Source information:
Chemical mapping of a 177-nucleotide RNA with 2A3 and DMS. For DMS the reverse transcriptase was MarathonRT. The reactions ran in a buffer of 150 mM KOAc, 10 mM MgCl2 and 150 mM bicine (pH 8.5), at 24 C. For DMS, 7,466 sequencing reads were counted. Reactivities are rounded to 0.1 and cut off at 0 and 3.
RNA sequence: GGGAACGACUCGAGUAGAGUCGAAAAGUCCCCACUUUCGAGUGGGGACAAUCAAAGUUUUGGCACUCGCAGCCCGCAGCGUUGGUGCUCCCACGCGGUCCAUAACUGCCUACUUCGGUAGGCAGAAGCAGAUUAUAUCAUUCGUGAUAUAAUCUGCAAAAGAAACAACAACAACAAC
Reactivity to 2A3 in 0.01 (KOAc 150mM, MgCl2 10mM, bicine 150mM(pH8.5), 24C), signal-to-noise 5, nucleotides 027 to 126: g000u000c000c000c010c000a010c010u100u090u060c210g120a000g000u010g000g010g000g020a000c020a000a000u090c020a000a040a070g030u040u080u130u120g040g000c030a010c040u050c040g030c020a020g030c010c010c010g010c030a050g020c030g030u080u120g020g030u070g020c020u040c010c010c000a040c020g030c030g000g020u060c020c010a030u050a190a090c000u000g000c000c000u010a010c000u020u070c230g080g000u010a000g010g020c000a000g000a000a000
Reactivity to DMS in 0.01 (KOAc 150mM, MgCl2 10mM, bicine 150mM(pH8.5), 24C), signal-to-noise 5, nucleotides 027 to 126: g000u010c000c000c000c000a010c010u000u000u010c130g020a020g050u000g010g000g010g010a000c010a000a040u010c100a110a080a120g010u000u010u000u000g000g020c030a060c050u000c050g010c050a110g000c020c010c020g010c110a050g020c050g010u010u000g010g020u010g000c050u000c020c000c010a080c060g010c060g010g010u000c030c060a050u020a080a220c010u000g000c000c000u000a010c000u000u010c130g010g020u000a000g000g010c000a000g000a040a090